[RMDB]
RNA sequence: GGGAACGACUCGAGUAGAGUCGAAAAUGUGCAACUGUGUGAGCACAAGUAAUUUAUGGACAUGGUUUGCUAUUUGCAUAUGAAACAGACUUCUUGUUCUUUGUGGUGGAGAAAAUGGCUCCUAUGGGUCACAAUUAGCCUAUCUGGCAAUUAGUCACCUGAUUUAGGGGUUCGCCCCUAAAUCAGGAAAAGAAACAACAACAACAAC
Reactivity to 2A3 in 0.01 (KOAc 150mM, MgCl2 10mM, bicine 150mM(pH8.5), 24C), signal-to-noise 1, nucleotides 027 to 156: u060g000u000g020c010a060a040c070u060g050u010g070u040g160a040g040c010a000c010a080a030g010u000a020a170u090u230u050a090u130g050g000a070c060a020u020g010g020u000u020u040g050c010u010a040u070u070u090g010c060a020u030a040u240g000a030a060a010c080a010g100a010c000u070u010c000u060u060g050u100u050c000u080u000u110g050u020g020g030u020g020g060a090g040a060a110a000a000u030g060g000c040u040c000c000u010a110u110g040g000g010u010c020a010c010a060a040u060u070a040g010c010c010u240a230u000c120u040g000g000c020a000a000u040u040a000g000u030c030a010